[RMDB]
RNA sequence: GGGAACGACUCGAGUAGAGUCGAAAAGAUAUGGACUCCCACUGUGGACAUGUCUGUAUCUCGGAAACGAGAUAUAAAGACAACAGCCAUUGGGAGUCCUAAGUCAAAACGUCGCUUCGGCGACGAACUUCCUAGCAGUCUUCGGACUGCUAGGAAGAAAAGAAACAACAACAACAAC
Reactivity to DMS in 0.01 (KOAc 150mM, MgCl2 10mM, bicine 150mM(pH8.5), 24C), signal-to-noise 1, nucleotides 027 to 126: g000a020u000a070u010g000g010a010c000u000c000c000c010a010c300u000g000u000g000g000a040c050a190u000g010u000c000u000g000u010a000u000c000u000c040g020g000a000a050a040c000g030a010g000a010u010a000u000a040a130a040g000a010c000a100a060c250a120g000c000c010a010u000u010g000g010g000a020g000u000c000c000u000a000a060g000u000c030a110a020a060a240c100g030u000c000g040c010u010u010c260g000g000c010g010a000c000g010a000a090
Reactivity to 2A3 in 0.01 (KOAc 150mM, MgCl2 10mM, bicine 150mM(pH8.5), 24C), signal-to-noise 1, nucleotides 027 to 126: g000a000u020a000u070g000g020a000c000u010c080c030c010a030c110u140g000u070g070g020a060c130a300u300g000u010c010u010g010u000a000u020c000u000c010g000g000a010a050a030c000g000a010g000a020u010a000u060a040a300a060g000a030c040a150a190c130a300g050c010c000a010u020u060g000g020g030a000g000u000c020c000u000a000a000g010u000c000a030a040a020a030c000g000u000c000g020c000u070u020c300g060g010c020g020a000c000g010a020a000